[RMDB]
RNA sequence: GGGAACGACUCGAGUAGAGUCGAAAACUGCUUAGAUGGCAUGUCGCUUUGGACAAAGCGUAAAAAGUCCAAAUUAAAAUUAAACGCAAAUAACGUUAAAUUUGCUCCUGCUUACGCUAAAGCUGCGUAAGUUCAGUUGAGCCCGAAACUCAAGUGAGGUUUCUAUACACUUCGGUGUAUAGAAACCAAAAGAAACAACAACAACAAC
Reactivity to 2A3 in 0.01 (KOAc 150mM, MgCl2 10mM, bicine 150mM(pH8.5), 24C), signal-to-noise 3, nucleotides 027 to 156: c000u010g000c000u050u080a060g020a170u200g070g010c030a030u110g030u020c000g000c000u030u000u020g000g000a020c050a080a300a030g000c010g060u130a010a010a010a010a010g000u000c000c000a050a000a020u040u000a010a000a000a010u040u090a090a040a030c050g000c050a110a060a090u120a120a060c020g020u010u080a100a060a110u120u060u090g000c010u010c010c000u000g010c000u000u000a000c000g010c020u100a190a130a110g100c210u110g010c020g000u000a000a000g000u030u100c010a000g000u030u090g000a000g020c000c020c010g140a100a050a010c100u110c130a120a060g110u030g090a050
Overview
The record gives the reactivity of an RNA of 207 nucleotides to 2A3. The RNA was probed in 150 mM KOAc, 10 mM MgCl2 and 150 mM bicine (pH 8.5) at 24 C. For 2A3, 1,595 sequencing reads were counted.